[RMDB]
RNA sequence: GGGAACGACUCGAGUAGAGUCGAAAACCAAGGAGUGGCUCCCGCUAGGCCCAGCACCUGGGGUGACUCCCAGGAGGUUGGGGAGUCCCGAGUGAACACCUGGCCACAGUGACCACCAGUACUUGGCUGUCAUCUGGCUUUUCGAAGCCAGAUGACAAAAAGAAACAACAACAACAAC
Reactivity to 2A3 in 0.01 (KOAc 150mM, MgCl2 10mM, bicine 150mM(pH8.5), 24C), signal-to-noise 1, nucleotides 027 to 126: c020c000a060a010g110g100a110g020u080g020g000c010u040c020c000c000g010c130u020a040g040g130c000c010c000a000g000c000a020c020c000u010g050g000g000g000u060g190a030c020u040c000c000c030a020g090g000a150g050g030u060u010g000g000g020g000a000g010u000c010c010c020g020a020g060u100g060a060a070c020a000c010c050u050g000g000c010c000a040c140a100g090u060g040a010c000c010a020c000c000a090g020u120a100c030u100u040g010g090c000